[RMDB]
RNA sequence: GGGAACGACUCGAGUAGAGUCGAAAAGACGAUUAGAAAUGUGUAGCAUAAGGGCCAAUGAGCUACACAGAUGGCCCAGGGAUCGGAGCUAUUAUACGAUAGCAGUUCAGAUUCCAACUCAUCGCAAGUCGCCACUCAGGUUCGCCUGAGUGGCGGCAAAAGAAACAACAACAACAAC
Reactivity to 2A3 in 0.01 (KOAc 150mM, MgCl2 10mM, bicine 150mM(pH8.5), 24C), signal-to-noise 4, nucleotides 027 to 126: g070a040c020g000a020u000u060a010g060a070a110a080u020g000u000g000u000a010g000c050a160u120a300a130g010g010g050c020c020a070a140u230g090a050g010c000u000a000c000a010c000a000g040a020u090g060g000c000c000c000a020g000g000g000a000u000c000g000g000a030g010c030u010a010u060u030a220u110a120c180g020a000u010a010g000c010a020g060u100u050c010a040g010a000u010u020c000c000a000a060c000u020c000a020u000c000g000c010a050a030
Reactivity to DMS in 0.01 (KOAc 150mM, MgCl2 10mM, bicine 150mM(pH8.5), 24C), signal-to-noise 2, nucleotides 027 to 126: g000a080c010g000a040u010u030a060g020a090a110a120u000g010u000g000u000a000g000c030a030u010a110a130g000g000g010c080c110a090a070u040g000a090g040c000u000a000c000a080c040a030g000a080u000g000g020c010c010c010a240g000g030g010a000u010c030g000g000a050g000c000u000a000u000u000a140u050a090c210g000a010u000a000g030c050a130g000u010u040c040a180g070a020u020u010c000c000a130a020c070u000c000a050u000c020g030c090a170a060

Annotation
The record gives the reactivity of an RNA of 177 nucleotides to 2A3 and DMS. Source: RMDB library OK1LIB, as collected in RNAgym. For 2A3 the reverse transcriptase was SuperScript II with manganese. For DMS the reverse transcriptase was MarathonRT. The reactions ran in a buffer of 150 mM KOAc, 10 mM MgCl2 and 150 mM bicine (pH 8.5), at 24 C. For 2A3, 4,217 sequencing reads were counted.